Background
The record gives the reactivity of an RNA of 207 nucleotides to 2A3. Reactivities are given for positions 27 through 156. The RNA was probed in 150 mM KOAc, 10 mM MgCl2 and 150 mM bicine (pH 8.5) at 24 C. Source: RMDB library RNAMAK, as collected in RNAgym. The 2A3 profile rests on 704 reads.

[RMDB]
RNA sequence: GGGAACGACUCGAGUAGAGUCGAAAAGCGUACUACUUGUGGACAUGAACCGUAUGACCGUUUGACGGAUCCCAAAUAGGAUCCCGAGGUCGCACGGUUCAACAGCCACAAGUAUCGCAAACGAAAGAAUUCAGAUUUCGAUCUGAAUUCUUUCGAAUGUACGGGUACACUUCGGUGUACCCGUACAAAAAGAAACAACAACAACAAC
Reactivity to 2A3 in 0.01 (KOAc 150mM, MgCl2 10mM, bicine 150mM(pH8.5), 24C), signal-to-noise 1, nucleotides 027 to 156: g010c000g000u060a060c040u010a000c000u000u010g000u000g020g000a020c020a290u140g000a030a010c000c010g000u000a040u000g000a010c000c070g050u060u110u250g060a060c040g000g010a000u030c040c050c030a060a210a270u300a190g000g000a000u030c000c000c000g000a010g050g000u030c020g000c000a000c000g020g000u000u000c000a000a000c000a000g030c000c000a000c000a000a000g000u000a000u040c010g000c000a000a050a070c040g000a000a000a000g000a000a000u020u000c000a000g030a000u030u050u300c300g070a080u010c010u000g010a000a000u000u020c000u000u000u000c000g000a000a000